[RMDB]
RNA sequence: GGGAACGACUCGAGUAGAGUCGAAAACGGAAAAGAGGAGUUUGAAUUAGAUUUGCAAAACGGGCGGUAUCAAGAAUACUGUCACUCUAUAUGUCUAAUUUAUCGUCAACUCUGCAAAAAGAAAAUAGACUGGUUCAAGAUUCGUCUUGAACCAGUCAAAAGAAACAACAACAACAAC
Reactivity to DMS in 0.01 (KOAc 150mM, MgCl2 10mM, bicine 150mM(pH8.5), 24C), signal-to-noise 2, nucleotides 027 to 126: c030g020g000a060a070a170a110g020a070g020g000a120g020u000u020u020g000a000a020u000u000a020g010a010u030u030u000g000c130a020a010a040a110c300g000g000g040c000g060g000u030a000u000c120a130a200g060a170a040u000a000c000u000g000u000c050a050c070u070c100u020a100u080a000u010g000u040c000u030a000a020u000u000u010a010u050c210g000u030c090a010a090c000u000c000u000g000c290a040a050a080a000a150g010a130a010a110a030u060a040
Reactivity to 2A3 in 0.01 (KOAc 150mM, MgCl2 10mM, bicine 150mM(pH8.5), 24C), signal-to-noise 3, nucleotides 027 to 126: c020g000g050a000a040a110a060g070a040g000g010a020g010u010u060u060g030a010a020u010u020a000g010a010u040u090u300g060c080a090a090a000a030c020g000g010g000c000g010g040u000a000u040c030a070a090g130a170a000u000a000c000u010g000u000c010a130c080u020c050u030a090u020a030u200g010u010c000u000a000a000u010u040u050a110u130c100g110u030c040a010a060c000u000c010u050g000c030a060a080a060a060a000g150a040a090a020a020u130a010

The record gives the reactivity of an RNA of 177 nucleotides to DMS and 2A3. For 2A3, 1,544 sequencing reads were counted.